[RMDB]
RNA sequence: GGGAACGACUCGAGUAGAGUCGAAAACAAUGCAGGUUAUGCCAAAGGGAUGUCCCGACCGGAGGCCGACAAUCCAGGGAACCGGAUGUCAUCACGUUGUUGCAGUACCAGAUGGCAUCUUAAAUCCAAAAGAACACAUAGUUCGCUAUGUGUUCAAGAUUUAUACGGUGUUCGCACCGUAUAAAUCAAAAGAAACAACAACAACAAC
Reactivity to 2A3 in 0.01 (KOAc 150mM, MgCl2 10mM, bicine 150mM(pH8.5), 24C), signal-to-noise 4, nucleotides 027 to 156: c070a060a110u190g100c090a050g100g060u250u200a100u230g010c020c020a020a020a030g020g000g010a020u050g050u030c000c000c030g010a010c000c000g010g010a010g000g000c000c010g010a060c050a150a090u110c070c070a030g040g000g010a030a040c020c020g000g000a000u010g000u020c010a000u010c000a010c140g020u000u040g060u050u030g050c090a090g080u150a150c050c020a010g000a000u000g010g000c000a000u000c000u010u030a020a040a040u050c050c010a050a080a010a050g000a000a000c000a000c000a000u010a000g000u050u050c120g020c120u000a000u000g000u000g010u000u010c010a000a000
Reactivity to DMS in 0.01 (KOAc 150mM, MgCl2 10mM, bicine 150mM(pH8.5), 24C), signal-to-noise 2, nucleotides 027 to 156: c040a100a120u000g040c060a090g050g010u000u010a070u000g030c060c030a010a300a210g000g020g020a100u000g000u000c010c000c030g000a300c030c020g000g010a300g000g020c040c020g000a070c060a020a070u000c050c040a180g000g020g000a130a120c090c060g060g010a040u000g030u000c010a050u000c040a260c200g010u000u000g000u000u000g000c020a090g020u010a070c080c030a210g000a030u000g000g000c000a000u010c010u010u000a030a080a100u000c040c050a030a060a080a190g000a000a020c010a000c010a010u000a030g010u000u020c300g000c010u000a000u000g000u000g040u000u000c000a040a050

Conditions: 150 mM KOAc, 10 mM MgCl2 and 150 mM bicine (pH 8.5), 24 C. The record gives the reactivity of an RNA of 207 nucleotides to 2A3 and DMS. For DMS the reverse transcriptase was MarathonRT. For 2A3, 3,532 sequencing reads were counted.